This 177-nucleotide RNA was probed chemically with 2A3. Conditions: 150 mM KOAc, 10 mM MgCl2 and 150 mM bicine (pH 8.5), 24 C.

RNA sequence: GGGAACGACUCGAGUAGAGUCGAAAACGAUUAAGUUCAUUCAUGACUUUUCCAGAUGUUGCAUACAUAACUUUUUUUAUUUGUAUUCGAACUAGUCCAAGCCGAUUCUCAAAAUCAUAUAAAAUCACGCUUGGAAUCCAUUCGUGGAUUCCAAGCGAAAAGAAACAACAACAACAAC
Reactivity to 2A3 in 0.01 (KOAc 150mM, MgCl2 10mM, bicine 150mM(pH8.5), 24C), signal-to-noise 1, nucleotides 027 to 126: c120g150a060u090u090a010a000g160u130u020c000a020u020u040c000a000u000g070a080c040u090u040u000u020c010c100a050g000a060u060g040u040u020g050c000a000u000a090c030a100u180a120a180c180u130u050u100u000u000u000u120a070u040u000u000g070u000a070u090u060c070g040a070a070c000u000a000g040u000c000c000a000a050g000c060c000g020a080u010u020c030u030c000a100a030a000a000u030c070a030u070a000u010a080a130a070a050u190c000a000
For 2A3, 405 sequencing reads were counted.